[RMDB]
RNA sequence: GGGAACGACUCGAGUAGAGUCGAAAAGGAGGAAGUUUGCGCCUUGAGGUUCUGCACGGUCGUGGUAACAGGAAAAGUGUUGGAAUGUUUGAAGGUCUUGCGGUUGUCAAGGACCAAGUCGUUAGUGUUACUAUAUAUUACUACCCUACGUGUUACUCUUUUUUAUAGCGUUCGCGCUAUAAAAAAGAAAAGAAACAACAACAACAAC
Reactivity to 2A3 in 0.01 (KOAc 150mM, MgCl2 10mM, bicine 150mM(pH8.5), 24C), signal-to-noise 1, nucleotides 027 to 156: g020g010a020g100g110a160a130g110u160u300u190g200c090g020c010c010u000u020g040a030g030g000u070u010c010u030g000c000a000c070g000g040u050c040g020u000g000g030u070a090a000c010a020g100g090a030a080a020a050g030u030g090u090u040g110g040a100a050u060g100u100u130u170g090a140a040g000g010u020c000u050u050g050c010g160g020u080u040g050u110c090a030a070g000g000a000c030c010a020a020g040u050c020g040u050u080a020g020u040g040u110u050a020c050u020a040u010a030u010a040u180u130a080c020u020a020c000c020c000u030a010c090g060u060g000u090u040a020c030u000
An RNA of 207 nucleotides, treated with 2A3 and read out base by base. Conditions: 150 mM KOAc, 10 mM MgCl2 and 150 mM bicine (pH 8.5), 24 C. For 2A3, 635 sequencing reads were counted. Source: RMDB library VIROID, as collected in RNAgym. Reactivities are rounded to 0.1 and cut off at 0 and 3.